[RMDB]
RNA sequence: GGGAACGACUCGAGUAGAGUCGAAAAGGCACUAUCUUCGGAUAGUGCCAAAACGGGAAAACGGCCUCCCGAAAAGAAAAGAUCGAAACGUUCAAAAGGCCGAAAUCUCCCGGUUCGCCGGGAGAAACAAACAGUAUGUCUUCGGACAUACUGUUUGAAAAGAAACAACAACAACAAC
Reactivity to DMS in 0.01 (KOAc 150mM, MgCl2 10mM, bicine 150mM(pH8.5), 24C), signal-to-noise 2, nucleotides 027 to 126: g020g000c010a000c000u010a000u000c000u000u000c180g020g020a030u010a020g050u000g000c000c000a020a000a070a150c020g010g000g010a050a090a120a220c000g020g010c000c000u010c000c000c010g000a100a080a140a140g000a080a040a140a150g000a060u010c080g000a060a150a130c140g000u010u000c030a080a020a080a090g010g010c010c000g000a040a080a060u000c000u000c000c000c000g010g020u000u010c250g010c000c000g020g000g000a020g010a000a020a150
Reactivity to 2A3 in 0.01 (KOAc 150mM, MgCl2 10mM, bicine 150mM(pH8.5), 24C), signal-to-noise 2, nucleotides 027 to 126: g010g000c000a010c000u010a020u010c010u030u040c100g020g000a000u000a010g000u000g010c010c000a000a010a010a000c000g000g000g010a030a070a000a070c000g010g000c000c010u010c000c010c000g070a100a120a010a010g070a020a080a010a020g040a020u030c050g070a210a110a130c060g030u020u030c040a060a070a040a000g000g000c000c000g000a000a000a000u000c000u010c000c010c000g020g030u040u030c230g040c020c000g000g000g000a000g000a000a000a000

Structure probing data (DMS and 2A3) for a 177-nucleotide construct. It was measured as part of the RMDB library M2PK50. For DMS the reverse transcriptase was MarathonRT. 2A3 adducts were read by reverse transcription with SuperScript II with manganese. The DMS profile rests on 2,299 reads.